[RMDB]
The record gives the reactivity of an RNA of 177 nucleotides to DMS and 2A3. Values cover nucleotides 27 to 126.

RNA sequence: GGGAACGACUCGAGUAGAGUCGAAAACGAGUGCUCACAUUGGGUAUGUUGGAGGGAGGCUCAGAUGCUCCUGGAUCAGCUUGAUAUGACACCGAUGCCGGAGGAAGCGGAGAAUUUUGACCCACCACCGCAUAAGUGGUUUCGACCACUUAUGCGGAAAAGAAACAACAACAACAAC
Reactivity to DMS in 0.01 (KOAc 150mM, MgCl2 10mM, bicine 150mM(pH8.5), 24C), signal-to-noise 2, nucleotides 027 to 126: c100g000a100g030u000g030c070u010c030a050c090a060u000u000g030g010g010u020a030u020g010u010u000g000g010a200g010g020g000a060g010g020c010u000c200a150g010a180u000g000c060u000c030c020u000g000g040a100u000c050a030g020c070u030u010g030a100u000a060u000g020a110c080a040c090c030g000a130u000g020c020c020g000g010a190g010g030a110a130g010c030g040g000a120g010a080a090u020u000u000u000g000a150c030c000c020a070c170c140a090
Reactivity to 2A3 in 0.01 (KOAc 150mM, MgCl2 10mM, bicine 150mM(pH8.5), 24C), signal-to-noise 1, nucleotides 027 to 126: c010g000a010g020u060g060c010u030c000a060c010a090u180u140g000g010g010u120a170u240g080u090u050g080g070a010g030g070g000a060g060g000c060u060c120a010g060a050u090g050c010u020c060c030u040g020g030a020u050c010a010g050c010u070u090g020a060u060a060u200g030a060c020a010c060c060g010a020u080g030c000c000g050g030a040g000g000a000a020g010c000g040g040a040g040a050a070u000u040u110u220g060a060c000c000c060a020c060c000a040